[RMDB]
RNA sequence: GGGAACGACUCGAGUAGAGUCGAAAAGCUGCAAACGGUGGUAAGGGUUACGAUGCUCGCAGGCUUCGCGCGGACGAGGUUGCAGGACUUUGCAACAUGGAUCGUUAUUUGCUUGCUCGCACGCGUAAGGAGUCGUAGUAUUCGUACUACGACUCCUAAAAGAAACAACAACAACAAC
Reactivity to DMS in 0.01 (KOAc 150mM, MgCl2 10mM, bicine 150mM(pH8.5), 24C), signal-to-noise 3, nucleotides 027 to 126: g020c040u010g010c070a050a060a110c100g010g030u010g010g020u010a050a100g000g010g020u010u000a050c060g010a150u000g010c030u010c100g030c020a070g010g000c050u000u000c120g000c100g010c030g000g010a080c010g000a080g000g000u000u000g010c020a040g020g000a120c210u000u010u000g020c020a040a050c050a100u010g020g010a050u000c050g000u010u010a190u010u000u000g010c030u000u000g010c010u000c090g020c200a030c100g030c050g010u000a060
Reactivity to 2A3 in 0.01 (KOAc 150mM, MgCl2 10mM, bicine 150mM(pH8.5), 24C), signal-to-noise 2, nucleotides 027 to 126: g040c000u040g050c000a070a000a110c040g010g080u040g050g020u100a080a140g060g000g000u050u010a040c050g040a000u060g000c010u000c050g040c030a010g010g040c000u040u060c070g070c000g000c020g010g010a000c010g010a020g110g090u000u000g030c010a010g080g070a110c110u170u220u020g030c020a020a040c010a070u090g060g070a140u030c000g030u000u020a160u070u040u050g030c020u020u030g000c010u020c040g000c030a020c060g050c010g020u010a040

Conditions: 150 mM KOAc, 10 mM MgCl2 and 150 mM bicine (pH 8.5), 24 C. The record gives the reactivity of an RNA of 177 nucleotides to DMS and 2A3. It was measured as part of the RMDB library OK2TST.